Description: This 207-nucleotide RNA was probed chemically with 2A3. For 2A3, 637 sequencing reads were counted.
[RMDB]
RNA sequence: GGGAACGACUCGAGUAGAGUCGAAAAGGGAACCCCUCCGGUCUUAUCCAACCUCUGUUUCGGCAGAGGAUACCGUACUCCCAAGCUGUAAGGCUUGGGGCCCGAGAGAAGUCGCUCUCUCUCGCCCUGUCCAUCCUCUCAGGCAUAGAGAUGACCACCUCUGUAUUCUCUUCGGAGAAUACAGAGGAAAAGAAACAACAACAACAAC
Reactivity to 2A3 in 0.01 (KOAc 150mM, MgCl2 10mM, bicine 150mM(pH8.5), 24C), signal-to-noise 1, nucleotides 027 to 156: g020g000g040a040a050c000c000c000c000u070c060c050g000g030u010c050u120u140a030u140c040c040a020a080c010c000u000c000u010g070u030u040u110c140g190g010c010a000g010a020g000g000a000u010a010c030c000g030u070a100c040u040c010c000c000a020a000g040c000u040g060u300a170a060g060g000c000u000u000g000g050g000g040c070c000c020g040a010g000a000g060a070a030g100u150c020g010c120u010c000u000c000u040c000u050c060g020c000c000c020u030g010u020c030c010a070u020c010c030u050c020u020c030a010g030g040c020a080u050a070g030a030g000a020u000g060a050c000c020a030

Source information:
Values cover nucleotides 27 to 156.